[RMDB]
Structure probing data (DMS) for a 177-nucleotide construct.
The RNA was probed in 150 mM KOAc, 10 mM MgCl2 and 150 mM bicine (pH 8.5) at 24 C.
For DMS, 6,508 sequencing reads were counted.
Reactivities are rounded to 0.1 and cut off at 0 and 3.
RNA sequence: GGGAACGACUCGAGUAGAGUCGAAAAGAUAUGGAACAUUACGGGAGGAAUUUACUUCCACUGUCUGGAUUCGGAAACGAAUCCAGACAGUGGAAGUAACUUCCAUCGAUCGUAGUGUUCCUAAGUCCACAUUAAACAAGUUCGCUUGUUUAAUGUGAAAAGAAACAACAACAACAAC
Reactivity to DMS in 0.01 (KOAc 150mM, MgCl2 10mM, bicine 150mM(pH8.5), 24C), signal-to-noise 3, nucleotides 027 to 126: g000a120u010a300u010g000g010a010a010c000a010u000u000a000c000g010g010g000a040g020g000a010a010u000u000u000a010c010u000u010c010c000a010c000u000g010u010c000u000g000g000a040u000u010c010g020g000a130a120a260c010g030a020a010u010c000c000a000g000a000c000a010g030u000g000g000a000a010g010u000a000a000c100u000u000c000c010a200u000c200g010a050u010c000g010u000a010g030u000g000u000u010c010c000u000a010a070g000u000c060